[RMDB]
RNA sequence: GGGAACGACUCGAGUAGAGUCGAAAAUACGAAUGAAGGAUUACUAAAUAUUAAACGAACACGUUCUGAAUUAGUUGAAUCCGGUGAGCAAGAUUUGAAUGAUAUCAUUCUUAAAAUUACAGGUAUCAUACGAAUACGAUUUCGAUCGUAUUCGUAUAAAAGAAACAACAACAACAAC
Reactivity to DMS in 0.01 (KOAc 150mM, MgCl2 10mM, bicine 150mM(pH8.5), 24C), signal-to-noise 7, nucleotides 027 to 126: u030a100c110g010a090a050u040g010a180a110g000g000a020u000u000a060c030u010a040a030a070u030a130u020u030a070a040a060c040g020a110a090c260a130c110g020u000u010c080u010g010a090a100u010u010a020g000u000u010g020a010a040u000c000c000g000g030u020g000a090g010c120a040a060g000a080u010u000u010g000a050a080u000g010a080u010a050u020c010a070u020u020c060u020u010a040a040a040a070u020u030a050c140a090g010g000u000a030u010c070
Reactivity to 2A3 in 0.01 (KOAc 150mM, MgCl2 10mM, bicine 150mM(pH8.5), 24C), signal-to-noise 7, nucleotides 027 to 126: u200a020c050g090a050a090u260g030a080a060g020g010a010u030u000a020c010u030a030a050a120u270a080u160u180a060a040a020c030g060a080a020c150a030c190g020u040u000c040u090g090a080a080u040u000a030g030u020u130g070a010a000u000c000c000g000g060u130g030a070g010c080a090a040g020a120u080u090u150g060a110a070u080g020a030u050a020u140c020a040u080u060c000u100u170a150a130a050a060u170u090a080c060a050g050g000u030a030u060c020

The record gives the reactivity of an RNA of 177 nucleotides to DMS and 2A3. The DMS profile rests on 15,563 reads. It was measured as part of the RMDB library OK1LIB. As a SHAPE reagent, 2A3 marks flexible, mostly unpaired nucleotides at the ribose 2'-OH. The reactions ran in a buffer of 150 mM KOAc, 10 mM MgCl2 and 150 mM bicine (pH 8.5), at 24 C.